Chemical mapping of a 177-nucleotide RNA with 2A3 and DMS. It was measured as part of the RMDB library OK2TST. In probing experiments dimethyl sulfate is read out at A N1 and C N3, which are open when not base-paired.
RNA sequence: GGGAACGACUCGAGUAGAGUCGAAAACCUCGUUGACCUGCCAGGUCUAGAAGGCUGCUACCCACAGUGCCCAGCCAGCCAGCCCUUCUUCAAUGAGGACCAGAUGAAGUGUGUGGCCCAGUGUGGCCACCCACGCUCGCUUCGGCGAGCGUGGGUGAAAAGAAACAACAACAACAAC
Reactivity to 2A3 in 0.01 (KOAc 150mM, MgCl2 10mM, bicine 150mM(pH8.5), 24C), signal-to-noise 1, nucleotides 027 to 126: c000c000u010c040g060u090u170g040a070c020c020u020g210c050c070a030g040g050u060c000u030a100g040a170a030g080g010c020u000g050c020u090a080c020c050c000a020c000a120g170u100g030c010c000c040a010g050c020c000a010g000c040c000a000g130c000c000c000u090u000c000u000u080c030a030a130u110g030a000g020g000a000c020c080a020g020a060u240g090a020a130g090u000g000u000g020u120g110g100c040c040c000a140g090u140g060u140g160g070c000
Reactivity to DMS in 0.01 (KOAc 150mM, MgCl2 10mM, bicine 150mM(pH8.5), 24C), signal-to-noise 2, nucleotides 027 to 126: c010c000u000c080g010u020u020g000a090c050c020u010g010c180c080a070g010g010u000c040u000a070g000a130a080g000g000c040u010g010c070u000a120c030c010c010a100c120a130g010u000g020c020c040c010a120g010c070c040a090g010c050c050a100g030c060c010c010u000u000c020u000u000c060a060a060u000g010a060g000g010a110c080c050a110g010a090u000g000a060a100g020u010g000u000g010u000g010g010c020c010c040a150g040u000g020u000g020g000c010

The RNA was probed in 150 mM KOAc, 10 mM MgCl2 and 150 mM bicine (pH 8.5) at 24 C. For 2A3 the reverse transcriptase was SuperScript II with manganese.